The record gives the reactivity of an RNA of 177 nucleotides to DMS. For DMS, 3,397 sequencing reads were counted.

RNA sequence: GGGAACGACUCGAGUAGAGUCGAAAAAGCGUGACCGGACUGGACCUGGACGCGGCGCGCCAGCGCCUGAAGGGGGCAGGUUUCCAGGUUGCCGAUCAGCCCACCUUGAUCAACAGCACCGCCAAGAAUAAUGCAGUGGAUUCGUCCACUGCAUUAUAAAAGAAACAACAACAACAAC
Reactivity to DMS in 0.01 (KOAc 150mM, MgCl2 10mM, bicine 150mM(pH8.5), 24C), signal-to-noise 3, nucleotides 027 to 126: a100g000c060g020u000g000a050c010c010g000g000a130c040u000g000g010a070c020c010u000g000g010a120c300g000c150g000g010c020g020c030g030c160c260a150g010c040g010c010c010u000g010a140a130g000g020g000g010g000c030a030g000g000u000u010u010c020c010a040g020g000u000u000g000c040c020g010a070u010c040a060g000c020c020c030a100c070c010u000u000g000a070u000c050a060a050c070a050g000c030a070c040c040g020c030c060a110a090g000a110